[RMDB]
RNA sequence: GGGAACGACUCGAGUAGAGUCGAAAAGGAAGACAUUUGGCCUUCAACUGACUCAUACAGACCGGAAGAGGUGUCACGAGCAGUUUCCAAGCAUGGUCACUGCCCCCUGGCGGCCACGACCUAGAGUUGCUACAAGUGAUGAUCAGGCCGAGUGAAAUAAUAGUGGAUCAUUCGUGAUCCACUAUUAAAAAGAAACAACAACAACAAC
Reactivity to 2A3 in 0.01 (KOAc 150mM, MgCl2 10mM, bicine 150mM(pH8.5), 24C), signal-to-noise 4, nucleotides 027 to 156: g130g030a030a030g070a020c010a040u040u050u090g030g000c020c000u050u080c040a050a020c030u060g100a030c010u010c020a060u140a270c040a060g070a100c040c080g090g020a110a030g040a070g030g040u060g010u020c020a000c090g000a010g000c010a000g010u050u060u000c020c010a040a010g090c050a080u120g010g000u020c040a000c060u050g010c010c000c000c020c040u010g000g040c000g020g010c010c030a040c040g000a020c000c000u050a050g000a010g070u030u040g050c050u100a050c050a190a030g000u020g110a110u020g010a020u140c040a010g020g000c010c020g010a010g000u050g060a060a080a020
Reactivity to DMS in 0.01 (KOAc 150mM, MgCl2 10mM, bicine 150mM(pH8.5), 24C), signal-to-noise 3, nucleotides 027 to 156: g020g010a060a050g020a090c020a170u010u000u020g040g020c000c000u020u000c020a080a100c080u000g000a080c030u000c030a130u000a140c080a100g020a070c010c020g050g020a090a170g000a210g010g030u000g000u000c040a080c050g010a060g030c030a020g010u000u000u000c010c010a060a240g000c150a050u000g030g000u000c030a050c020u000g000c030c020c010c050c020u000g030g000c010g000g000c030c020a050c000g000a090c030c010u010a130g000a190g000u000u000g010c010u000a120c090a140a120g010u000g010a080u000g030a120u000c040a080g010g040c000c000g000a080g020u000g000a100a100a160